[RMDB]
RNA sequence: GGGAACGACUCGAGUAGAGUCGAAAAACCUUAUAAAGAUGUAUGAACGCAAGACAGUUUGGCAUCUCCCUUUAAGGCCUUGUUCGAUUAGAAACUUCAAUGACAAGUCUUAUUGUGAGGCAUUCGUCAGUCUCUAUGCAUUCGUGCAUAGAGACUGAAAAGAAACAACAACAACAAC
Reactivity to DMS in 0.01 (KOAc 150mM, MgCl2 10mM, bicine 150mM(pH8.5), 24C), signal-to-noise 1, nucleotides 027 to 126: a120c000c000u000u010a180u010a050a100a000g030a000u000g000u020a070u000g050a110a050c040g040c130a110a080g000a140c140a110g040u000u000u000g000g010c000a030u000c010u000c030c030c000u000u000u000a090a000g000g040c080c030u040u000g000u000u000c050g000a130u020u000a050g010a120a140a160c190u000u010c140a050a140u060g040a220c020a020a020g010u040c100u030u000a100u000u030g000u050g000a080g000g000c100a120u000u010c090g000u000
Reactivity to 2A3 in 0.01 (KOAc 150mM, MgCl2 10mM, bicine 150mM(pH8.5), 24C), signal-to-noise 4, nucleotides 027 to 126: a000c030c000u100u010a160u100a020a240a020g030a010u040g010u030a300u200g040a010a000c020g030c100a050a120g100a190c050a060g010u010u000u050g050g020c010a030u000c010u030c010c020c000u010u060u000a040a010g010g000c010c010u030u020g050u040u100c040g070a100u030u020a020g070a050a140a050c030u100u050c070a130a140u270g030a050c040a070a000g030u010c010u020u030a010u030u060g030u010g030a060g030g000c050a040u050u020c030g020u010